Chemical mapping of a 177-nucleotide RNA with DMS and 2A3. For 2A3 the reverse transcriptase was SuperScript II with manganese. As a SHAPE reagent, 2A3 marks flexible, mostly unpaired nucleotides at the ribose 2'-OH. The reactions ran in a buffer of 150 mM KOAc, 10 mM MgCl2 and 150 mM bicine (pH 8.5), at 24 C. Reactivities are given for positions 27 through 126. The data come from the RNA Mapping Database (RMDB), library OK1LIB.
[RMDB]
RNA sequence: GGGAACGACUCGAGUAGAGUCGAAAAAGCAUGCUUCGAAGGAAUAAAAGAGAGAAAUCUCGAAGUGUGUGUGUAAUAAAGUCGAAUAAAUAAAAGACGAAACUUCGAGCAUGCGAACACACACAGAGGGAUCUUAGUAGUUCGCUACUAAGAUCCCAAAAGAAACAACAACAACAAC
Reactivity to DMS in 0.01 (KOAc 150mM, MgCl2 10mM, bicine 150mM(pH8.5), 24C), signal-to-noise 1, nucleotides 027 to 126: a110g000c000a020u000g000c000u000u020c000g000a020a000g000g000a280a110u010a090a080a000a130g020a000g020a040g000a160a050a080u000c000u010c000g000a100a120g000u000g000u010g000u000g010u000g000u010a050a070u040a050a050a130g040u010c000g020a240a130u020a000a080a190u020a020a050a050a180g000a000c000g010a060a110a060c020u000u000c000g000a070g000c000a040u000g000c000g080a010a020c010a000c000a000c000a000c020a090g040a280
Reactivity to 2A3 in 0.01 (KOAc 150mM, MgCl2 10mM, bicine 150mM(pH8.5), 24C), signal-to-noise 2, nucleotides 027 to 126: a010g040c010a010u010g000c000u160u120c080g010a010a010g160g050a130a000u200a200a090a130a080g190a010g010a000g050a010a080a060u000c000u020c080g000a050a160g020u000g020u000g000u010g020u000g140u040a050a140u110a180a180a000g020u010c060g100a010a080u120a220a070a020u240a120a070a100a010g000a000c060g010a180a050a000c000u000u000c000g000a000g000c000a000u000g010c000g000a010a000c000a000c000a030c000a000c000a000g130a060